[RMDB]
RNA sequence: GGGAACGACUCGAGUAGAGUCGAAAAUAUAGAUAAGAAUUCCGGUCUUUUCCGGAGCCACCAAGUGGAAUGCUACGUGCAUAAAUGCACGUAGCUAAAGACCCGAAGGCUAGCAAAAGCUAGCCAAGAUUACUAGUGACUUCGGUCACUAGUAAUCAAAAGAAACAACAACAACAAC
Reactivity to DMS in 0.01 (KOAc 150mM, MgCl2 10mM, bicine 150mM(pH8.5), 24C), signal-to-noise 2, nucleotides 027 to 126: u020a120u030a050g030a240u030a040a080g000a130a140u030u010c030c050g060g000u020c290u020u020u060u050c000c030g000g000a020g030c010c040a030c030c150a150a170g020u000g000g000a110a120u010g060c020u000a010c000g040u000g000c000a030u030a060a060a170u060g090c000a010c000g030u050a000g020c040u010a000a110a140g000a110c030c010c010g000a040a070g000g000c000u000a020g000c020a180a090a080a120g010c010u000a000g000c010c010a030a010
Reactivity to 2A3 in 0.01 (KOAc 150mM, MgCl2 10mM, bicine 150mM(pH8.5), 24C), signal-to-noise 3, nucleotides 027 to 126: u130a010u060a040g050a090u180a140a140g060a080a070u100u010c020c010g030g020u030c160u050u130u050u070c000c010g010g000a000g010c000c000a000c020c050a160a060g020u040g050g050a080a050u080g000c000u000a000c010g040u020g000c030a100u150a300a280a060u190g000c000a000c000g000u010a000g010c000u000a000a000a000g000a010c000c000c040g050a090a050g000g000c000u010a000g000c010a090a190a280a030g000c000u000a000g000c000c000a000a000